[RMDB]
RNA sequence: GGGAACGACUCGAGUAGAGUCGAAAAUUUCGGACACGGGCCUAAUCCGCAGCCAAGCUCCGUAGCGCAUUUUUGUUAGUGCGUCGGAGAAGGUUCACAGACUGUAAGGGAAGGGGUUCGCACUUGUGUGCGGGCUUAAGAGACAGUCGGUCCCUCUCAUCGUAAUUGUCUUCGGACAAUUACGAUGAAAAGAAACAACAACAACAAC
Reactivity to 2A3 in 0.01 (KOAc 150mM, MgCl2 10mM, bicine 150mM(pH8.5), 24C), signal-to-noise 2, nucleotides 027 to 156: u070u040u070c000g000g000a000c010a020c040g000g010g040c000c000u030a050a050u030c010c000g030c040a000g000c000c010a080a000g010c010u000c000c000g040u100a080g060c030g000c040a040u050u050u040u110u220g220u120u190a030g000u020g020c040g070u070c020g010g000a000g010a000a020g000g000u000u080c110a030c020a110g000a040c010u010g020u080a120a180g070g000g080a020a110g080g010g000g020u000u000c010g060c010a000c040u240u300g080u160g000u000g300c010g000g000g000c000u040u070a030a050g050a020g030a040c000a000g000u000c010g000g020u010c000c000c010u000c000u000
An RNA of 207 nucleotides, treated with 2A3 and read out base by base. The reactions ran in a buffer of 150 mM KOAc, 10 mM MgCl2 and 150 mM bicine (pH 8.5), at 24 C.